[RMDB]
RNA sequence: GGGAACGACUCGAGUAGAGUCGAAAAUAAAAGAAUUAAACAAUGAUACUUGGUCUCUUAAAACAUUUUGUCUUAAACCAUCUUCAAGUUAGACAUUGCUUUGCAGCAAUGAAUGGUAGAUAAGGGAUCAUUUUAUUCUGAAACUGAAGAAACAUUAGAUUGAUAGAGUAUUCGUACUCUAUCAAUCAAAAGAAACAACAACAACAAC
Reactivity to DMS in 0.01 (KOAc 150mM, MgCl2 10mM, bicine 150mM(pH8.5), 24C), signal-to-noise 2, nucleotides 027 to 156: u000a080a080a210a120g000a160a090u000u000a120a090a100c010a100a120u000g000a150u000a050c070u000u010g010g040u010c010u000c040u000u030a040a090a060a070c030a100u000u000u000u000g040u000c060u010u000a080a180a080c030c010a020u020c010u010u010c040a080a170g010u000u010a040g010a150c020a050u000u000g030c000u020u000u010g040c240a100g050c010a000a010u000g010a000a040u000g000g070u040a060g000a210u010a020a060g010g000g030a010u010c010a050u000u000u000u020a070u010u000c040u010g000a080a100a090c080u000g010a050a080g000a120a060a150c020a060u000u010a300
Reactivity to 2A3 in 0.01 (KOAc 150mM, MgCl2 10mM, bicine 150mM(pH8.5), 24C), signal-to-noise 3, nucleotides 027 to 156: u120a010a030a000a030g080a010a080u180u150a140a130a040c040a050a120u130g010a030u060a130c030u010u030g010g000u000c010u010c000u040u080a080a130a080a000c030a090u080u090u100u180g050u000c030u060u110a130a080a020c030c010a040u060c070u190u120c120a120a090g020u040u040a040g030a020c010a020u000u000g000c000u100u120u300g090c210a020g000c010a040a000u040g010a040a010u020g020g000u020a060g020a090u030a020a000g000g010g000a000u010c000a000u020u020u010u050a030u040u060c050u010g040a120a100a110c100u140g030a120a010g040a110a070a020c030a020u240u300a040
Chemical mapping of a 207-nucleotide RNA with DMS and 2A3.
Source: RMDB library OK3TST, as collected in RNAgym.
DMS adducts were read by reverse transcription with MarathonRT.